[RMDB]
RNA sequence: GGGAACGACUCGAGUAGAGUCGAAAAGAUCGUAAAACAUGCCCGGCUUACCGUGAGCCGCCUUUGAAAGAAAGGUUUACACGGACUCUGUUGCGUUACGCACGUACCUAACUUGUGCCGGCAGAAUCUUCGCUCCUUGUUUCGACAAGGAGCGAAGAAAAGAAACAACAACAACAAC
Reactivity to 2A3 in 0.01 (KOAc 150mM, MgCl2 10mM, bicine 150mM(pH8.5), 24C), signal-to-noise 2, nucleotides 027 to 126: g030a030u050c040g080u200a040a030a030a000c070a030u160g100c000c000c040g000g010c020u000u070a140c000c000g030u000g060a010g030c020c000g100c000c010u100u040u050g200a140a150a030g160a000a010a000g010g000u000u080u020a010c000a000c020g000g130a100c020u030c020u010g070u050u060g130c300g110u090u070a000c050g000c040a040c000g000u020a050c020c100u140a010a160c030u090u090g040u020g040c040c000g000g000c010a020g080a050a100u000
This 177-nucleotide RNA was probed chemically with 2A3.
The RNA was probed in 150 mM KOAc, 10 mM MgCl2 and 150 mM bicine (pH 8.5) at 24 C.
Values cover nucleotides 27 to 126.